[RMDB]
RNA sequence: GGGAACGACUCGAGUAGAGUCGAAAAUAAGGGGAUUUAUUAUCUAACUUGGGCGGGUGAUUUAGUGACUCCAGCGCGUAUUAGUUAGAUUAUGAAUACGUGCGAUAGAUUACGCGCAAAGUAACAAGGGUAUAUUAUUCUUCGGAAUAAUAUACCCAAAAGAAACAACAACAACAAC
Reactivity to 2A3 in 0.01 (KOAc 150mM, MgCl2 10mM, bicine 150mM(pH8.5), 24C), signal-to-noise 3, nucleotides 027 to 126: u240a010a010g060g000g030g070a020u100u160u110a220u160u120a040u080c030u010a010a070c010u070u050g000g120g030c070g010g010g000u050g100a030u010u010u170a030g010u060g080a010c030u030c060c090a060g010c000g010c000g010u010a010u000u010a020g040u000u030a000g030a150u020u070a080u150g040a000a000u010a000c020g000u010g000c000g000a020u010a030g020a010u000u030a000c000g010c000g000c090a000a000a110g030u050a010a090c120a060a080
Reactivity to DMS in 0.01 (KOAc 150mM, MgCl2 10mM, bicine 150mM(pH8.5), 24C), signal-to-noise 3, nucleotides 027 to 126: u050a110a070g000g000g000g000a110u020u030u000a100u020u000a030u050c060u020a070a070c060u010u000g010g010g010c150g000g000g020u010g000a030u030u010u030a070g020u020g010a070c070u010c100c070a110g020c000g000c000g000u000a020u000u010a120g010u000u010a110g010a080u020u020a080u010g000a020a010u010a000c010g020u020g000c020g000a110u010a040g000a120u010u010a010c040g000c080g000c050a080a040a030g000u010a060a040c190a070a130